[RMDB]
RNA sequence: GGGAACGACUCGAGUAGAGUCGAAAAGCCAGCAGGCAUCAGGACGUCGUGCCUGCAGCGACGGCAGUGAGCGAAGCGAGUAGAAGACGCGAAGAAAAGCCGGAGACAAAACGUGAGGACGACGCCAGUAGUACUAGUCCUUCGGGACUAGUACUACAAAAGAAACAACAACAACAAC
Reactivity to 2A3 in 0.01 (KOAc 150mM, MgCl2 10mM, bicine 150mM(pH8.5), 24C), signal-to-noise 5, nucleotides 027 to 126: g030c000c020a030g000c010a000g000g000c000a000u020c050a060g090g060a090c010g010u030c000g010u020g000c000c000u000g040c000a010g010c010g040a040c000g020g010c020a090g060u100g170a080g110c050g070a110a000g030c040g020a030g100u180a060g150a180a010g110a050c030g010c070g090a070a090g100a060a110a010a000g000c000c000g000g020a080g010a020c110a020a070a020a030c090g130u130g090a090g010g080a010c020g000a000c010g000c000c020a000
Reactivity to DMS in 0.01 (KOAc 150mM, MgCl2 10mM, bicine 150mM(pH8.5), 24C), signal-to-noise 4, nucleotides 027 to 126: g000c000c030a130g000c000a000g050g000c000a010u020c100a090g000g020a190c020g000u000c000g030u000g010c000c000u000g010c030a160g020c010g010a200c010g000g000c020a050g010u040g000a180g010c020g010a130a220g000c000g000a060g000u000a140g030a130a190g010a060c010g000c040g000a180a190g020a030a050a250a110g000c020c010g000g000a130g010a080c130a090a030a070a100c120g020u020g000a170g000g020a130c050g020a020c020g030c030c010a140
The data come from the RNA Mapping Database (RMDB), library OK1LIB.
Chemical mapping of a 177-nucleotide RNA with 2A3 and DMS.
DMS (dimethyl sulfate) methylates the pairing face of unpaired adenines and cytosines.
For DMS, 5,442 sequencing reads were counted.
For 2A3, 3,651 sequencing reads were counted.
The RNA was probed in 150 mM KOAc, 10 mM MgCl2 and 150 mM bicine (pH 8.5) at 24 C.